[RMDB]
RNA sequence: GGGAACGACUCGAGUAGAGUCGAAAAUUGCGGGUUCGGCUGGCCCGAUUUGUCCCGACCCGUCAGCACACGGUUCAGCACGGCGACGGCGACGGUCGCAGCAGUCGCGGCUGCUGUCGCCUGCGCCUAGUACUAGGACUUUCGAGUCCUAGUACUAAAAAGAAACAACAACAACAAC
Reactivity to DMS in 0.01 (KOAc 150mM, MgCl2 10mM, bicine 150mM(pH8.5), 24C), signal-to-noise 5, nucleotides 027 to 126: u020u030g010c030g010g000g000u010u000c090g020g010c020u010g010g000c000c010c010g010a060u000u000u020g000u000c020c010c000g000a130c140c030c020g010u010c110a060g010c100a070c110a080c030g000g010u010u010c070a130g000c060a070c180g000g010c010g010a040c070g000g000c010g010a040c080g000g020u000c130g010c010a070g020c020a080g020u030c080g000c090g020g000c000u010g000c010u000g000u000c010g000c000c000u000g010c030g020c030c020
Reactivity to 2A3 in 0.01 (KOAc 150mM, MgCl2 10mM, bicine 150mM(pH8.5), 24C), signal-to-noise 5, nucleotides 027 to 126: u160u140g050c010g000g010g010u050u140c020g040g010c040u050g050g000c010c010c010g020a030u100u050u110g080u030c010c000c000g030a060c010c000c010g030u050c050a030g060c050a020c010a010c030g050g000u170u140c040a030g030c020a020c070g000g000c000g010a060c010g010g000c000g020a080c050g040g010u070c030g000c010a030g000c010a020g080u160c100g010c050g040g000c030u100g010c010u020g000u010c000g000c000c000u010g000c000g000c000c000
Background
Chemical mapping of a 177-nucleotide RNA with DMS and 2A3. The DMS profile rests on 15,942 reads. For 2A3, 10,419 sequencing reads were counted. The RNA was probed in 150 mM KOAc, 10 mM MgCl2 and 150 mM bicine (pH 8.5) at 24 C.